[RMDB]
RNA sequence: GGGAACGACUCGAGUAGAGUCGAAAAGCAAGCUAGCCGGCAAGAAAGCAAACUUGACCACCAAGGAUAAAAGAGAUCUUAUCCAAGGAUGCAAAAGAUAAUCUCACUUUUGACACCCACUGAUCUCAAAACGUGCGGUUCUUCGGAACCGCACGAACACUUGAAUAAAGUUCGCUUUAUUCAAGUGAAAAGAAACAACAACAACAAC
Reactivity to DMS in 0.01 (KOAc 150mM, MgCl2 10mM, bicine 150mM(pH8.5), 24C), signal-to-noise 2, nucleotides 027 to 156: g000c030a000a090g040c000u010a300g050c010c020g000g070c000a170a240g010a140a200a120g000c030a070a110a030c020u000u000g020a200c000c020a120c040c010a040a300g010g030a120u000a030a080a080a280g020a110g000a060u000c020u000u000a070u000c070c080a030a280g000g010a030u000g030c020a000a010a010a040g010a060u010a040a070u000c090u000c080a190c010u000u000u000u000g000a220c010a030c000c000c010a180c220u010g000a030u000c010u000c020a040a050a090a110c020g020u030g030c060g010g010u000u010c000u000u000c300g030g010a010a040c000c010g000c000a000c000g000a030a100
Reactivity to 2A3 in 0.01 (KOAc 150mM, MgCl2 10mM, bicine 150mM(pH8.5), 24C), signal-to-noise 5, nucleotides 027 to 156: g030c010a020a010g030c010u090a010g010c010c020g070g020c040a040a050g050a170a080a000g050c040a050a050a050c030u070u060g070a140c020c000a020c030c010a060a040g010g000a020u030a050a030a050a020g020a000g000a010u000c000u010u030a010u020c030c030a050a040g030g000a030u080g000c000a000a030a030a020g020a070u150a170a160u130c080u030c090a040c020u010u010u020u030g100a100c020a040c010c010c000a050c110u080g000a010u010c010u000c000a060a080a010a030c010g000u010g010c010g000g000u000u010c000u010u040c080g070g000a000a000c000c000g000c000a000c000g000a000a000